[RMDB]
RNA sequence: GGGAACGACUCGAGUAGAGUCGAAAAACUUCACCUAUGGGACCAUGCUCUUUCAUAGCUCAGGGCCAUUCCGCUCGAUCAAGGUCCCCGGUGGCCAGUCACUCAUUGAGCAUCCUAUUGGGAAUACUACCAGAAUUACGUUUUCACAGCGCGUCGGUACACCCACCAAAUUCGUUUGGUGGGUGUAAAAAGAAACAACAACAACAAC
Reactivity to 2A3 in 0.01 (KOAc 150mM, MgCl2 10mM, bicine 150mM(pH8.5), 24C), signal-to-noise 3, nucleotides 027 to 156: a010c050u090u050c010a050c070c000u020a130u200g000g010g000a020c010c010a040u060g020c010u050c040u040u300u120c160a150u240a080g000c000u060c140a110g000g000g030c020c010a120u180u030c040c060g030c010u030c020g040a120u110c100a180a100g000g000u000c000c000c000c000g000g000u010g000g000c030c010a020g080u040c000a000c050u020c030a070u040u120g020a000g020c010a040u000c000c010u140a210u140u090g050g000g000a000a060u060a080c030u070a140c000c020a030g050a040a040u160u090a070c070g030u040u040u020u140c120a110c010a030g080c020g010c040g060u020c060g070g030
Reactivity to DMS in 0.01 (KOAc 150mM, MgCl2 10mM, bicine 150mM(pH8.5), 24C), signal-to-noise 2, nucleotides 027 to 156: a050c010u010u010c030a060c000c050u010a100u000g000g000g000a030c020c010a100u000g000c020u000c050u060u030u010c090a140u000a080g040c060u030c060a210g010g010g010c020c100a130u010u030c050c080g000c030u000c060g000a120u010c060a110a080g010g020u000c000c020c030c050g010g020u000g040g030c030c040a180g000u000c030a020c040u000c040a150u030u010g010a070g010c010a110u000c030c030u000a140u010u000g010g020g010a040a100u000a100c060u000a080c040c010a160g010a160a080u000u000a040c070g050u000u000u000u020c070a080c040a040g000c070g000c060g000u010c050g000g000
Structure probing data (2A3 and DMS) for a 207-nucleotide construct. For 2A3 the reverse transcriptase was SuperScript II with manganese. Conditions: 150 mM KOAc, 10 mM MgCl2 and 150 mM bicine (pH 8.5), 24 C. As a SHAPE reagent, 2A3 marks flexible, mostly unpaired nucleotides at the ribose 2'-OH.